[RMDB]
RNA sequence: GGGAACGACUCGAGUAGAGUCGAAAAGCUAGUGUUUGUGGAGUCGCCCUUGAAAUACGACCCUUUGAUUAUCUGGUACCUAACCCUAACGGGAACAUUGCGUGGUGGGUAGUUUGACUGGGGUGGUUCAUAACUGUAUAUUCGUAUACAGUUAUGAAAAAGAAACAACAACAACAAC
Reactivity to DMS in 0.01 (KOAc 150mM, MgCl2 10mM, bicine 150mM(pH8.5), 24C), signal-to-noise 9, nucleotides 027 to 126: g010c040u010a060g020u010g010u000u010u010g030u010g010g000a060g010u010c030g010c030c010c010u010u010g010a070a080a080u010a070c080g000a060c020c010c010u000u010u010g010a060u000u010a040u000c030u000g010g010u000a050c030c020u000a100a100c010c000c010u010a110a130c290g000g000g000a080a080c120a120u010u010g000c110g020u000g000g010u000g000g000g010u000a030g010u000u010u010g010a110c110u010g000g000g000g010u000g010g010u010
Reactivity to 2A3 in 0.01 (KOAc 150mM, MgCl2 10mM, bicine 150mM(pH8.5), 24C), signal-to-noise 9, nucleotides 027 to 126: g050c050u070a050g030u060g080u130u090u120g120u110g050g030a050g020u040c020g030c000c010c000u010u100g100a060a050a020u170a040c040g040a050c010c000c000u040u050u090g080a090u030u080a050u070c040u040g060g090u070a040c010c010u040a070a120c010c000c010u030a070a040c060g010g000g030a050a030c050a120u080u220g030c060g030u040g070g130u050g020g050g010u010a040g020u020u050u080g060a060c040u030g000g000g000g010u050g020g010u010

This 177-nucleotide RNA was probed chemically with DMS and 2A3. For DMS the reverse transcriptase was MarathonRT.